Chemical mapping of a 177-nucleotide RNA with DMS. Source: RMDB library 15KREP, as collected in RNAgym.
RNA sequence: GGGAACGACUCGAGUAGAGUCGAAAAGUAAUGUUGUAAAACAGUGUUGCACUGCUGCUGUUGAUUUAAGUAUGGAUAAGUUGCGCCGUGUGGAUUGGAAAUCAACCCUACGGUUGUUACUUAUGUUAACGAUUACACAGUUCGCUGUGUAAUCGUUAAAAGAAACAACAACAACAAC
Reactivity to DMS in 0.01 (KOAc 150mM, MgCl2 10mM, bicine 150mM(pH8.5), 24C), signal-to-noise 1, nucleotides 027 to 126: g000u020a130a050u020g000u000u000g010u030a080a060a080a230c020a030g030u000g040u030u000g040c050a100c070u000g020c040u000g030c010u000g020u000u000g000a100u000u000u010a060a090g020u030a070u000g020g000a020u000a000a000g000u000u000g020c000g000c000c010g010u000g000u000g010g000a070u000u010g000g010a110a050a230u010c020a020a000c030c010c010u000a010c000g000g010u000u020g050u000u020a010c010u000u000a000u000g020u000u000